[RMDB]
RNA sequence: GGGAACGACUCGAGUAGAGUCGAAAAUUCACAUCCGAUAAGGGCGUCUUUGAUGGAACAACCGACAGUGUCUAAGCCUUAAGGACAGCGGGUGUUGUUAUUGCGUGCAAAAGGUUCACGAAGAAGGCACAUAGACGCGGUUCGCCGCGUCUAUGUGAAAAGAAACAACAACAACAAC
Reactivity to DMS in 0.01 (KOAc 150mM, MgCl2 10mM, bicine 150mM(pH8.5), 24C), signal-to-noise 1, nucleotides 027 to 126: u000u010c080a060c010a030u010c000c040g000a120u000a070a110g010g020g030c090g000u000c010u000u000u010g000a200u010g000g040a010a120c230a080a060c050c000g010a110c130a110g010u000g010u000c010u010a140a160g020c010c050u000u080a090a150g050g010a000c050a040g020c010g020g000g020u000g040u000u010g040u010u010a070u000u000g010c070g030u000g040c010a090a030a170a030g030g010u010u000c040a060c020g010a100a090g010a050a020g000g000